[RMDB]
About this RNA
An RNA of 177 nucleotides, treated with DMS and 2A3 and read out base by base. DMS adducts were read by reverse transcription with MarathonRT. For 2A3, 4,445 sequencing reads were counted. The data come from the RNA Mapping Database (RMDB), library M2PK90. The RNA was probed in 150 mM KOAc, 10 mM MgCl2 and 150 mM bicine (pH 8.5) at 24 C. For DMS, 8,931 sequencing reads were counted.
RNA sequence: GGGAACGACUCGAGUAGAGUCGAAAAUCAUAGCUUCACCAGCGCGACCUGGUCCUCCACGAGCUGGCCCGCGGCCGCGAGCUCAGCUUUUACCAUCCCGCCCACCUCCUCGCGCAGGUACACCGAAAUAUGAACCUUUAUUCGUAAAGGUUCAUAUAAAAGAAACAACAACAACAAC
Reactivity to DMS in 0.01 (KOAc 150mM, MgCl2 10mM, bicine 150mM(pH8.5), 24C), signal-to-noise 7, nucleotides 027 to 126: u010c080a090u010a120g020c050u010u000c090a080c050c040a080g010c030g010c050g010a090c090c060u010g010g000u000c030c010u000c040c040a100c160g010a040g010c010u000g010g020c000c020c020g020c040g010g030c170c140g000c020g000a030g000c030u010c010a030g010c010u000u000u000u000a090c100c070a100u000c020c010c030g000c050c020c020a090c050c020u000c020c030u000c030g010c050g020c040a030g000g010u000a080c120a120c050c040g010a070a090
Reactivity to 2A3 in 0.01 (KOAc 150mM, MgCl2 10mM, bicine 150mM(pH8.5), 24C), signal-to-noise 2, nucleotides 027 to 126: u070c020a050u060a170g030c040u140u110c040a020c060c030a010g030c030g010c020g060a050c000c040u020g010g050u020c010c010u000c030c010a030c050g010a010g030c020u010g010g010c000c000c020g020c020g070g080c120c140g020c020g030a010g000c050u090c200a010g000c000u040u030u030u060a070c020c000a070u070c010c010c000g020c000c010c000a010c000c000u040c000c010u010c010g010c010g000c010a010g000g010u030a030c020a040c030c030g060a130a080